[RMDB]
RNA sequence: GGGAACGACUCGAGUAGAGUCGAAAACAUUGUUCUGAUCAUCUGAAGAUCAGCUAUUAGAAGAGAAAGAUCAGUUAAGUCCUUUGGACCUGAUCAGCUUGAUACAAGAACUGCUGAUUUCAACUUCAAAACGGGUGCUACUUCGGUAGCACCCGAAGUUCACCUCAUACUUCGGUAUGAGGUGAACAAAAGAAACAACAACAACAAC
Reactivity to 2A3 in 0.01 (KOAc 150mM, MgCl2 10mM, bicine 150mM(pH8.5), 24C), signal-to-noise 3, nucleotides 027 to 156: c050a050u070u150g030u150u040c040u040g050a080u050c030a030u020c180u140g050a100a010g000a080u010c010a010g000c000u080a110u240u070a080g070a110a010g040a030g100a110a210a020g010a000u000c000a000g020u110u120a220a000g000u020c040c000u110u230u300g040g010a040c050c050u040g010a010u030c020a010g060c000u070u070g060a070u080a170c070a060a100g040a150a050c060u070g030c000u010g000a020u020u050u040c040a060a030c050u090u050c010a030a030a070a070c060g000g000g000u000g020c020u000a020c000u010u040c150g040g000u010a000g020c000a010c000c000c000g010a000a000